[RMDB]
RNA sequence: GGGAACGACUCGAGUAGAGUCGAAAAGAAGCCCCUGCUGCAGCGCAUCUACCACAUGAAGCGGGUGGACGGCAAGGGCUACAUAGGUGCCGAUGUGGCCACCCAAAGCGAGUACGCCGCCCAGGUGUAUCACAGGUUGAUUCGUCAACCUGUGAUAAAAAGAAACAACAACAACAAC
Reactivity to DMS in 0.01 (KOAc 150mM, MgCl2 10mM, bicine 150mM(pH8.5), 24C), signal-to-noise 4, nucleotides 027 to 126: g020a220a120g000c040c000c000c040u000g000c020u000g030c070a090g030c070g000c080a110u010c020u000a090c050c040a050c110a140u020g000a110a130g020c110g000g000g030u010g000g000a100c060g020g010c010a030a060g020g000g000c000u000a030c060a100u000a080g020g020u000g030c040c000g000a110u010g020u010g010g010c100c010a090c010c010c040a070a080a110g010c070g000a080g010u000a050c040g020c030c060g000c020c060c020a150g000g020u020g010
Reactivity to 2A3 in 0.01 (KOAc 150mM, MgCl2 10mM, bicine 150mM(pH8.5), 24C), signal-to-noise 2, nucleotides 027 to 126: g050a030a010g040c010c000c000c010u010g010c020u040g010c040a070g090c030g030c070a040u010c020u060a070c010c050a080c030a160u200g180a170a020g040c140g090g000g040u030g030g000a040c000g030g000c010a020a030g020g000g000c000u020a000c000a040u210a010g090g000u060g070c010c020g080a100u170g100u180g100g020c010c010a050c010c000c060a030a060a000g040c010g000a010g090u020a040c020g020c000c010g000c040c000c000a030g080g060u110g060